[RMDB]
The data come from the RNA Mapping Database (RMDB), library M2RFPK. An RNA of 207 nucleotides, treated with DMS and 2A3 and read out base by base. The RNA was probed in 150 mM KOAc, 10 mM MgCl2 and 150 mM bicine (pH 8.5) at 24 C.
RNA sequence: GGGAACGACUCGAGUAGAGUCGAAAAGUAUCCCUAGAUGAUAAAACACCGCACAUGGCUCGUAAGAGCGGUUAAAUUAGCAAGUAAUGCAAAUUACGCGAGGUAACGCAUGGCGUAGGCUCGUUAGAAAAGGGAGAAUCCUUCGGGAUUCUCCCAAUCAAGUUAUACUCUUCGGAGUAUAACUUGAAAAAGAAACAACAACAACAAC
Reactivity to DMS in 0.01 (KOAc 150mM, MgCl2 10mM, bicine 150mM(pH8.5), 24C), signal-to-noise 3, nucleotides 027 to 156: g040u000a090u000c000c020c010u000a120g010a100u000g010a100u000a060a070a140a170c080a060c000c010g020c040a120c020a120u000g040g030c020u030c030g010u010a140a160g020a090g020c010g020g010u010u000a060a100a150u000u010a130g010c040a100a120g030u010a040a090u000g020c100a060a090a120u010u010a050c040g020c020g000a110g060g020u000a050a040c040g020c020a070u000g040g010c030g020u000a090g010g020c020u000c040g030u010u000a050g000a060a070a070a150g000g010g020a050g020a020a000u000c000c000u000u000c280g020g030g010a010u000u000c010u000c000c000c000a000a000
Reactivity to 2A3 in 0.01 (KOAc 150mM, MgCl2 10mM, bicine 150mM(pH8.5), 24C), signal-to-noise 3, nucleotides 027 to 156: g010u030a090u090c030c000c010u020a030g030a190u160g020a020u130a140a090a020a030c010a000c020c030g040c010a020c020a140u080g120g000c030u050c090g080u070a110a020g020a020g060c030g000g000u030u040a010a100a120u030u110a020g030c040a080a040g060u120a100a100u050g040c040a070a010a140u120u050a030c030g000c010g010a000g000g100u150a020a010c030g000c150a190u180g100g020c010g000u010a020g150g030c000u010c010g000u040u040a030g070a110a110a020a050g000g000g000a010g000a000a000u000c020c000u000u050c140g050g000g000a000u000u000c000u000c000c000c000a000a000
Record summary
The DMS profile rests on 6,565 reads.